[RMDB]
RNA sequence: GGGAACGACUCGAGUAGAGUCGAAAAUAAAAUGAUGAUAUUAUAUAUGGGCGCACAUUUAAAUUUCAUACUACUAAAUGUAGAAUGAUGAAAAUUAUAGGUUGUCAUCCUUGAUCUGAUUAUUUUUCAUUGGAUAAUCAUUCGUGAUUAUCCAAUGAAAAGAAACAACAACAACAAC
Reactivity to 2A3 in 0.01 (KOAc 150mM, MgCl2 10mM, bicine 150mM(pH8.5), 24C), signal-to-noise 3, nucleotides 027 to 126: u230a000a120a010a070u090g060a010u040g010a020u020a090u300u080a150u120a050u030a080u190g000g060g000c010g050c000a000c000a020u030u070u200a070a140a070u020u070u030c010a010u030a010c000u010a000c000u090a180a170a140u240g000u010a020g040a150a080u060g060a020u030g040a040a070a000a000u130u120a080u040a140g050g050u090u040g080u080c010a030u120c000c000u040u130g020a070u010c060u030g010a120u060u150a100u060u100u000u010u000